Notes: The record gives the reactivity of an RNA of 177 nucleotides to DMS and 2A3. Source: RMDB library OK1LIB, as collected in RNAgym. The RNA was probed in 150 mM KOAc, 10 mM MgCl2 and 150 mM bicine (pH 8.5) at 24 C. The 2A3 profile rests on 2,844 reads. The DMS profile rests on 4,905 reads. For DMS the reverse transcriptase was MarathonRT.

[RMDB]
RNA sequence: GGGAACGACUCGAGUAGAGUCGAAAAUUCGGCGCCCCGCUCGCGGUAUACCAAGACCGAGAUGGCUGACGAUCUGGCUGCGGUUUUGGACGGCCUGGGUGUGGCCAAGGUCAAGCUGGUGGCCCACUGGAAGUGGCAUAUUCGUAUGCCACUUCCAAAAAGAAACAACAACAACAAC
Reactivity to DMS in 0.01 (KOAc 150mM, MgCl2 10mM, bicine 150mM(pH8.5), 24C), signal-to-noise 2, nucleotides 027 to 126: u030u000c060g010g030c080g000c050c000c030c020g010c000u010c010g000c090g010g020u010a040u010a110c000c050a050a070g000a020c000c010g000a100g030a140u050g000g010c000u000g000a180c190g010a080u030c060u030g000g000c000u000g000c020g000g000u000u010u010u010g010g020a090c100g000g000c010c000u000g020g010g000u010g000u040g010g000c030c030a060a120g000g020u010c100a090a080g000c060u010g010g030u020g010g000c020c010c050a060c140
Reactivity to 2A3 in 0.01 (KOAc 150mM, MgCl2 10mM, bicine 150mM(pH8.5), 24C), signal-to-noise 4, nucleotides 027 to 126: u070u040c060g040g030c030g020c050c000c000c000g000c010u020c020g150c060g020g010u050a080u080a090c020c020a010a010g020a000c020c000g030a040g070a190u130g030g000c000u010g050a140c110g070a160u100c110u190g010g000c010u020g030c000g030g000u020u030u030u040g080g000a100c060g030g010c010c020u080g010g010g030u060g030u080g010g010c020c020a090a010g060g000u070c020a020a060g010c050u060g010g060u030g010g030c000c020c020a010c070